[RMDB]
Structure probing data (2A3 and DMS) for a 177-nucleotide construct.

RNA sequence: GGGAACGACUCGAGUAGAGUCGAAAAGUAGACGUUUCCAGGUAGGUGUCCGAGGUGGCUAGUCAUUUGUCUGUUAAUAUUGUUAUACCAUGUCAUCCUUACUAUACAGUCAUGAUGCUUUAGUCAACAGCAGAUCAGUUUUCGAACUGAUCUGCUGAAAAGAAACAACAACAACAAC
Reactivity to 2A3 in 0.01 (KOAc 150mM, MgCl2 10mM, bicine 150mM(pH8.5), 24C), signal-to-noise 1, nucleotides 027 to 126: g080u090a020g020a040c120g000u000u010u020c020c010a050g040g060u040a020g060g040u020g050u090c050c030g030a060g050g070u060g000g040c000u060a030g050u090c020a030u060u000u150g000u020c000u000g020u040u070a120a070u110a130u030u060g090u070u130a140u060a040c090c080a060u020g120u040c000a020u090c020c020u080u030a010c010u040a010u020a100c060a010g020u020c010a030u130g060a020u020g020c000u080u050u090a010g000u000c010a040a040
Reactivity to DMS in 0.01 (KOAc 150mM, MgCl2 10mM, bicine 150mM(pH8.5), 24C), signal-to-noise 2, nucleotides 027 to 126: g010u010a080g020a170c040g030u000u000u000c010c020a110g010g000u000a040g000g000u000g020u000c030c040g010a080g020g020u000g000g020c030u010a070g020u010c030a060u000u010u000g010u000c040u010g030u010u010a080a080u000a070u010u000g010u010u000a080u000a080c070c020a050u010g010u010c040a080u000c020c010u000u000a060c070u000a060u000a070c070a050g030u020c060a050u000g010a090u000g000c110u000u000u000a110g010u020c100a040a140
Notes
For 2A3 the reverse transcriptase was SuperScript II with manganese. Conditions: 150 mM KOAc, 10 mM MgCl2 and 150 mM bicine (pH 8.5), 24 C. Reactivities are given for positions 27 through 126.